RNA sequence: GGGAACGACUCGAGUAGAGUCGAAAAAGCCGAGGACUACGGUCCUCGGCAACAACCGUCACAACGGCUUCCUGGCGUGACGGGGUUAACCCCAACGGAGCAAGUGCGAGCUUGCGAGCUCGCACAAUUUAGGAGAAUUCCUUCGGGAAUUCUCCAAGGUUAUGUUAAACUUCGGUUUAACAUAACCAAAAGAAACAACAACAACAAC
Reactivity to 2A3 in 0.01 (KOAc 150mM, MgCl2 10mM, bicine 150mM(pH8.5), 24C), signal-to-noise 2, nucleotides 027 to 156: a020g000c000c000g000a010g000g000a000c040u090a040c280g070g020u000c000c010u000c000g030g040c000a000a000c000a000a000c000c000g000u000c000a000c000a000a050c100g080g000c010u210u160c050c030u080g050g000c020g010u000g000a010c000g010g000g010g000u110u200a080a100c000c000c000c000a090a040c070g020g030a010g020c060a140a060g020u010g000c010g000a010g000c030u090u110g070c100g060a020g000c000u000c000g010c000a000c010a010a010u030u020u130a060g000g000a000g000a000a000u000u000c020c000u040u080c220g040g000g000a000a000u000u040c000u010c010c000a000a020

An RNA of 207 nucleotides, treated with 2A3 and read out base by base. The RNA was probed in 150 mM KOAc, 10 mM MgCl2 and 150 mM bicine (pH 8.5) at 24 C. Reactivities are given for positions 27 through 156.